[RMDB]
RNA sequence: GGGAACGACUCGAGUAGAGUCGAAAAUCACACGAGUUCGCUCGUGUGAAAAUAAUACUCGCUAGAAAACGAUCAAAACUAGCGACAUACAUAACGAUCGAAAAACGCCUGGCUUCGGCCAGGCGAAUCCACAGAAUAGGUUCGCCUAUUCUGUGGAAAAAGAAACAACAACAACAAC
Reactivity to DMS in 0.01 (KOAc 150mM, MgCl2 10mM, bicine 150mM(pH8.5), 24C), signal-to-noise 1, nucleotides 027 to 126: u000c010a000c000a000c000g010a020g010u000u000c230g000c000u000c020g000u000g030u000g000a000a010a060a120u030a140a130u000a060c110u000c010g010c000u000a010g000a030a030a130a070c010g000a000u000c030a180a100a030a110c000u000a000g000c010g060a020c170a110u010a040c170a070u000a100a090c090g000a010u000c000g000a130a050a130a240a230c020g000c030c000u020g000g000c010u000u010c280g000g030c010c010a000g000g000c000g000a000a000

Source information:
The record gives the reactivity of an RNA of 177 nucleotides to DMS. Reactivities are given for positions 27 through 126. The DMS profile rests on 603 reads.